[RMDB]
RNA sequence: GGGAACGACUCGAGUAGAGUCGAAAAACUUAAUGCAAGCAGGGAGUGUCGUGCGUAGAGUUAACGUGCCCUACGUGUGUCUCCUAGCUAAUAAAGAGCAAGAAGCUAUUUUGAUGUCUGAAGACGUGAAAAUUGAAGAGUUCGCUCUUCAAUUUUCAAAAGAAACAACAACAACAAC
Reactivity to DMS in 0.01 (KOAc 150mM, MgCl2 10mM, bicine 150mM(pH8.5), 24C), signal-to-noise 1, nucleotides 027 to 126: a040c020u010u000a060a080u010g010c080a020a050g010c070a300g050g000g000a070g020u020g020u020c020g050u010g010c000g000u010a020g000a010g010u030u020a110a110c300g000u000g010c010c000c000u040a000c020g000u000g000u000g000u010c000u000c000c000u000a180g000c030u000a100a100u000a140a050a040g010a060g000c020a100a090g000a020a030g010c050u000a090u000u020u000u010g000a040u000g000u010c000u000g050a140a080g050a100c080g000u000
Reactivity to 2A3 in 0.01 (KOAc 150mM, MgCl2 10mM, bicine 150mM(pH8.5), 24C), signal-to-noise 2, nucleotides 027 to 126: a020c010u050u040a070a010u150g040c070a050a030g000c010a060g000g070g020a020g000u140g060u120c010g000u020g000c000g010u000a000g000a020g040u020u110a140a050c090g060u150g000c000c000c020u000a000c010g010u000g000u000g010u000c010u000c020c010u040a030g000c010u000a010a030u140a110a090a010g040a000g000c020a080a060g030a090a000g050c030u010a110u100u060u040u110g060a060u060g020u070c060u100g110a100a040g040a050c040g040u040

This 177-nucleotide RNA was probed chemically with DMS and 2A3. The 2A3 profile rests on 1,108 reads. High DMS reactivity at an A or C suggests that its Watson-Crick edge is free. The data come from the RNA Mapping Database (RMDB), library 15KREP. The RNA was probed in 150 mM KOAc, 10 mM MgCl2 and 150 mM bicine (pH 8.5) at 24 C.